[RMDB]
Source: RMDB library VIROID, as collected in RNAgym. Chemical mapping of a 177-nucleotide RNA with DMS and 2A3.
RNA sequence: GGGAACGACUCGAGUAGAGUCGAAAAUUCUUCCUGACUGAGCCAAACACGGUAAACAAAACCUUUGCUUUUCCCGUAUUCCAUAAUGGACGGGUGUUAUCCUUUUGUAAGAUAACUGCAGGUGCAGCUGAUUUAUGUGGUUCGCCACAUAAAUCAGAAAAGAAACAACAACAACAAC
Reactivity to DMS in 0.01 (KOAc 150mM, MgCl2 10mM, bicine 150mM(pH8.5), 24C), signal-to-noise 2, nucleotides 027 to 126: u000u000c170u000u000c030c020u010g020a120c080u010g010a100g010c030c080a050a070a130c150a090c170g000g000u000a030a090a080c130a040a030a080a080c030c050u000u000u000g000c050u000u000u020u010c020c000c000g000u000a110u000u010c010c030a160u010a080a060u020g000g000a030c060g020g010g010u000g000u000u000a020u000c020c030u000u010u000u000g020u020a040a050g010a050u000a020a040c000u010g010c010a060g000g030u010g000c090a100g010
Reactivity to 2A3 in 0.01 (KOAc 150mM, MgCl2 10mM, bicine 150mM(pH8.5), 24C), signal-to-noise 2, nucleotides 027 to 126: u060u010c000u020u030c010c010u030g020a100c040u050g060a010g050c040c010a110a210a020c040a060c150g070g000u100a140a100a040c050a010a140a030a040c010c010u050u090u100g020c030u150u050u040u040c030c000c030g030u090a300u080u100c040c000a070u100a270a140u300g040g010a020c000g020g010g030u000g000u020u040a000u030c010c010u090u170u070u160g140u140a150a000g000a050u020a040a030c010u040g010c020a020g000g080u050g030c000a020g000

DMS (dimethyl sulfate) methylates the pairing face of unpaired adenines and cytosines. For 2A3, 1,883 sequencing reads were counted. For DMS the reverse transcriptase was MarathonRT.